Chemical mapping of a 207-nucleotide RNA with DMS and 2A3.
The 2A3 profile rests on 2,270 reads.
The RNA was probed in 150 mM KOAc, 10 mM MgCl2 and 150 mM bicine (pH 8.5) at 24 C.
Source: RMDB library ARCHII, as collected in RNAgym.
RNA sequence: GGGAACGACUCGAGUAGAGUCGAAAAGAGAGAUGAACGGCGAAUUAUAAUUCAGGAUAGUCAUUCAUUAGCGUGUCGGUUCGCAGGUGGAUGGUGAAUUUAAAGAUCGACUAAGCAUGUAGUACCAAUGAUGAAAGGUUUUCGGACGCGGGUUCAACAUUGCAUUAUCGUUCGCGAUAAUGCAAUGAAAAGAAACAACAACAACAAC
Reactivity to DMS in 0.01 (KOAc 150mM, MgCl2 10mM, bicine 150mM(pH8.5), 24C), signal-to-noise 2, nucleotides 027 to 156: g020a110g000a150g020a000u000g010a090a060c040g020g000c040g020a120a090u020u000a150u010a060a090u010u020c100a120g000g030a100u000a120g020u000c020a100u010u000c070a060u000u000a140g040c050g070u000g010u020c030g010g010u000u000c050g000c030a160g020g030u010g010g000a030u000g020g020u010g000a050a090u010u010u000a040a080a100g000a050u000c030g030a090c050u000a090a190g020c090a050u000g030u030a120g000u000a060c040c020a060a100u000g010a090u000g010a020a060a070g000g000u010u010u020u000c030g030g000a100c040g010c070g010g000g020u020u050c000a010a180
Reactivity to 2A3 in 0.01 (KOAc 150mM, MgCl2 10mM, bicine 150mM(pH8.5), 24C), signal-to-noise 3, nucleotides 027 to 156: g030a000g010a000g000a050u080g020a080a020c030g020g000c010g020a030a040u110u080a120u100a250a110u110u090c040a030g000g100a060u070a030g030u010c020a030u080u000c020a030u060u080a010g010c000g010u040g030u060c040g020g000u040u040c020g000c030a010g030g010u020g030g020a020u010g010g060u070g020a030a030u060u110u140a080a090a020g030a030u060c020g020a010c020u030a040a020g020c050a080u110g010u080a030g000u010a040c010c000a050a030u050g040a040u060g010a070a030a000g040g010u050u070u080u120c030g010g010a020c010g030c060g100g000g000u040u040c000a030a020